[RMDB]
RNA sequence: GGGAACGACUCGAGUAGAGUCGAAAAGAUAUGGAAGCGUGCCUGAUGACCAUUACUACCCACCAAACACGGAGCUUCGGAAACGAAGCUCCGUGUUUGAGGUAAUGCAAGGGCCGCUUCCUAAGUCGGAUAGUAAAAAGUUCGCUUUUUACUAUCCAAAAGAAACAACAACAACAAC
Reactivity to DMS in 0.01 (KOAc 150mM, MgCl2 10mM, bicine 150mM(pH8.5), 24C), signal-to-noise 4, nucleotides 027 to 126: g010a120u000a140u010g010g020a010a020g040c010g020u020g030c010c000u000g020a100u020g010a160c300c010a010u010u010a000c010u000a070c020c010c040a300c170c010a020a010a010c000a010c000g010g010a010g020c000u000u000c000g010g000a140a120a250c010g020a030a000g000c000u010c000c000g000u000g000u000u000u000g000a080g000g010u010a010a000u000g010c020a060a080g010g010g000c000c020g020c000u000u010c000c000u000a020a080g000u000c210
Reactivity to 2A3 in 0.01 (KOAc 150mM, MgCl2 10mM, bicine 150mM(pH8.5), 24C), signal-to-noise 2, nucleotides 027 to 126: g070a080u300a260u300g000g030a010a000g010c070g210u300g070c110c010u240g110a300u100g030a070c020c020a010u020u020a010c010u050a050c040c000c050a030c020c010a030a020a000c000a020c040g060g010a000g000c000u090u000c070g080g100a170a110a050c010g000a000a000g010c020u030c000c000g000u000g000u000u000u000g010a010g000g000u000a000a010u040g000c020a050a100g050g030g020c010c000g000c020u010u000c000c000u010a030a010g170u080c140